Overview
The record gives the reactivity of an RNA of 177 nucleotides to 2A3. The reactions ran in a buffer of 150 mM KOAc, 10 mM MgCl2 and 150 mM bicine (pH 8.5), at 24 C. The data come from the RNA Mapping Database (RMDB), library OK1LIB.
[RMDB]
RNA sequence: GGGAACGACUCGAGUAGAGUCGAAAAGAAACUGGAUCCGUAAUCAUUUCAUCAGAACCAGGAUUUGGCAAAACGAUCAUUUCUGUCAAAACAACGUGUAUGAUAAAUUUACCAACCGUCAUUUUCACCAGUGCCAAGCAUUCGUGCUUGGCACUGGAAAAGAAACAACAACAACAAC
Reactivity to 2A3 in 0.01 (KOAc 150mM, MgCl2 10mM, bicine 150mM(pH8.5), 24C), signal-to-noise 2, nucleotides 027 to 126: g090a080a030a090c050u070g000g000a000u000c000c010g020u020a030a110u100c010a050u000u120u140c070a060u030c000a000g000a130a020c020c000a020g020g140a180u050u000u070g000g000c000a000a000a110a000c150g120a020u210c070a050u070u000u000c020u160g000u000c000a060a000a110a000c010a030a020c050g100u080g000u100a010u000g010a000u000a000a150a040u020u030u040a100c000c000a100a000c000c000g140u020c030a060u000u000u110u030c030a040